[RMDB]
RNA sequence: GGGAACGACUCGAGUAGAGUCGAAAAACUAACAUCAUUUUCGUCUUAGUAAAGAUAAACUUACCAGUGUAAGUAUAGUCUUCUUUUGUGCGAAUUAGUGGCUCAUAAACUAAUUCCUCUACUCCAAUGACCGUAAUAAUUUCGAUUAUUACGGUCAAAAAGAAACAACAACAACAAC
Reactivity to 2A3 in 0.01 (KOAc 150mM, MgCl2 10mM, bicine 150mM(pH8.5), 24C), signal-to-noise 7, nucleotides 027 to 126: a000c060u090a050a040c030a070u110c050a070u080u050u080u060c020g030u010c010u040u070a080g000u130a100a040a000g000a010u040a090a090a010c000u000u010a000c030c110a250g030u090g010u300a000a010g000u010a030u120a060g050u000c020u050u000c010u000u150u050u090g080u090g010c040g010a010a000u030u020a040g020u010g070g000c050u080c190a100u180a100a080a010c040u030a060a050u030u000c000c010u000c010u010a030c020u020c010c020a100a120
Reactivity to DMS in 0.01 (KOAc 150mM, MgCl2 10mM, bicine 150mM(pH8.5), 24C), signal-to-noise 6, nucleotides 027 to 126: a070c080u010a050a080c100a040u020c070a060u010u000u020u000c030g020u010c020u010u000a050g010u020a060a040a020g010a030u010a160a070a060c010u000u000a010c000c220a150g020u020g000u000a010a010g010u000a050u010a130g010u000c010u000u000c100u010u000u000u010g010u020g010c090g000a020a030u000u000a030g010u000g010g010c210u020c170a080u000a090a070a050c040u000a020a070u010u000c000c010u000c040u000a020c040u000c020c120a060a110
Chemical mapping of a 177-nucleotide RNA with 2A3 and DMS. Reactivities are given for positions 27 through 126. The RNA was probed in 150 mM KOAc, 10 mM MgCl2 and 150 mM bicine (pH 8.5) at 24 C.